[RMDB]
RNA sequence: GGGAACGACUCGAGUAGAGUCGAAAAAAAAAGGAGCCACUUCUCUAUGUGCCCAUCCGGCUGGCUGGACACACUAGACACCUCCCAGGUCCUCGUGUGUACCUGGUUGAGAGGCUCAUUGCUUGUGCGUUGCAUAAUAGUUCGCUAUUAUGCAACGAAAAGAAACAACAACAACAAC
Reactivity to 2A3 in 0.01 (KOAc 150mM, MgCl2 10mM, bicine 150mM(pH8.5), 24C), signal-to-noise 4, nucleotides 027 to 126: a010a000a010a000a010g150g010a020g000c010c020a030c050u190u080c030u000c000u010a010u050g010u010g010c020c000c000a000u010c000c030g260g160c270u250g020g010c010u010g010g000a010c000a010c000a010c050u010a000g010a010c020a030c050c000u000c000c000c010a010g000g020u020c020c020u060c060g130u160g010u020g000u150a010c000c000u000g020g000u070u130g020a040g000a020g010g000c000u000c000a040u030u140g050c050u100u100g040u110g140
Reactivity to DMS in 0.01 (KOAc 150mM, MgCl2 10mM, bicine 150mM(pH8.5), 24C), signal-to-noise 5, nucleotides 027 to 126: a040a050a060a080a090g020g000a020g010c000c010a110c180u000u010c090u000c010u000a020u010g010u000g010c000c000c000a010u000c010c000g020g010c220u010g020g010c100u000g000g010a010c010a010c000a010c250u000a000g000a040c150a100c170c010u000c020c000c000a010g000g000u000c020c030u010c300g020u010g020u000g020u000a020c000c000u000g000g000u010u010g000a020g000a100g000g000c010u000c000a070u000u000g000c100u000u000g000u000g010
Conditions: 150 mM KOAc, 10 mM MgCl2 and 150 mM bicine (pH 8.5), 24 C. Chemical mapping of a 177-nucleotide RNA with 2A3 and DMS. For DMS, 5,825 sequencing reads were counted. Values cover nucleotides 27 to 126.